Structure probing data (2A3) for a 207-nucleotide construct.
Conditions: 150 mM KOAc, 10 mM MgCl2 and 150 mM bicine (pH 8.5), 24 C.

[RMDB]
RNA sequence: GGGAACGACUCGAGUAGAGUCGAAAAUUAAUACUGCUACAUUUUUAAGACCCUUAGCUAUUUAGCUUUACCGCCCAGGAUGGGGUGCAGCGUUCCUGCAAUAUCCAGGGCACCUAGGUGCAGCCUUCAUGCCUCAUGCCGUUCGCGGCAUGAGGAAUCUCAUGACAUUUUUCGAAAUGUCAUGAGAAAAAGAAACAACAACAACAAC
Reactivity to 2A3 in 0.01 (KOAc 150mM, MgCl2 10mM, bicine 150mM(pH8.5), 24C), signal-to-noise 2, nucleotides 027 to 156: u060u030a050a030u080a160c040u090g070c020u090a060c050a170u080u100u060u090u140a120a080g050a060c010c010c010u040u060a010g000c010u020a070u240u260u160a120g010c000u040u040u020a030c000c020g020c000c000c010a000g010g020a010u010g010g030g010g000u040g000c000a000g000c020g050u130u080c000c000u000g000c020a040a040u020a010u120c000c000a020g000g010g020c000a000c000c020u030a010g020g020u050g090c030a040g090c040c000u090u140c050a030u170g090c000c000u010c000a000u010g000c010c000g020u030u040c210g020c030g140g000c010a000u000g000a000g000g000a000a000
Background:
The data come from the RNA Mapping Database (RMDB), library M2RFPK.